An RNA of 177 nucleotides, treated with DMS and 2A3 and read out base by base.

RNA sequence: GGGAACGACUCGAGUAGAGUCGAAAAUGGACGUUGUUCGCAACGUCCACAUACUGAGACGUACGUUAAACGUAUCGCGGGCAAAAGUGCAGUUACAAUAAGUACCUAUUGAGUUCGCUCAAUAGAAUGUGUGAGGAAGUUUCGACUUCCUCACACAAAAAGAAACAACAACAACAAC
Reactivity to DMS in 0.01 (KOAc 150mM, MgCl2 10mM, bicine 150mM(pH8.5), 24C), signal-to-noise 1, nucleotides 027 to 126: u010g010g000a030c000g040u000u000g040u000u000c140g040c040a000a010c000g000u010c000c000a000c080a040u010a050c030u010g000a100g010a140c140g010u000a010c000g030u000u040a130a070a120c030g000u000a040u020c120g020c000g000g000g030c150a030a070a040a050g010u000g070c030a000g000u000u000a040c180a060a030u010a000a170g010u020a110c140c000u000a020u000u000g000a050g000u010u000c230g000c010u000c000a000a010u000a000g010a070a070
Reactivity to 2A3 in 0.01 (KOAc 150mM, MgCl2 10mM, bicine 150mM(pH8.5), 24C), signal-to-noise 1, nucleotides 027 to 126: u090g010g000a010c000g000u010u000g040u030u080c130g040c060a010a000c000g000u060c000c000a010c000a010u020a000c000u110g060a040g070a100c010g010u000a010c000g010u090u200a070a210a010c010g010u040a020u140c040g000c080g020g000g030c020a070a000a000a000g080u090g000c020a020g010u010u100a060c070a060a080u100a200a040g050u040a060c000c010u000a000u000u030g010a010g000u040u130c240g010c030u010c010a000a000u000a000g080a070a080
For 2A3 the reverse transcriptase was SuperScript II with manganese.
Reactivities are given for positions 27 through 126.